Structure probing data (2A3) for a 177-nucleotide construct. For 2A3, 589 sequencing reads were counted.
RNA sequence: GGGAACGACUCGAGUAGAGUCGAAAAGACAUUGUGAGCUUGUUGGUUUAACAGGGUCUCAUUCCACCAGCCAUCACCCUUUGUGUUUCCUCUCCAUCCGAUAGCUUGGGUUCGUGCUCUGAUAGUCGCUAUACGGCGGGUUCGCCCGCCGUAUAGCAAAAGAAACAACAACAACAAC
Reactivity to 2A3 in 0.01 (KOAc 150mM, MgCl2 10mM, bicine 150mM(pH8.5), 24C), signal-to-noise 1, nucleotides 027 to 126: g020a040c010a100u040u050g040u010g160a010g000c010u090u020g120u070u220g000g110u120u110u000a040a020c040a040g090g000g020u000c030u000c050a080u130u030c020c010a030c010c030a000g030c000c000a010u010c010a100c000c000c070u000u090u020g100u050g000u000u090u030c070c010u000c020u020c060c000a030u020c000c000g090a030u020a130g060c040u090u070g000g000g000u050u130c010g000u000g000c050u020c020u060g010a130u010a010g020u020c040
Reactivities are given for positions 27 through 126.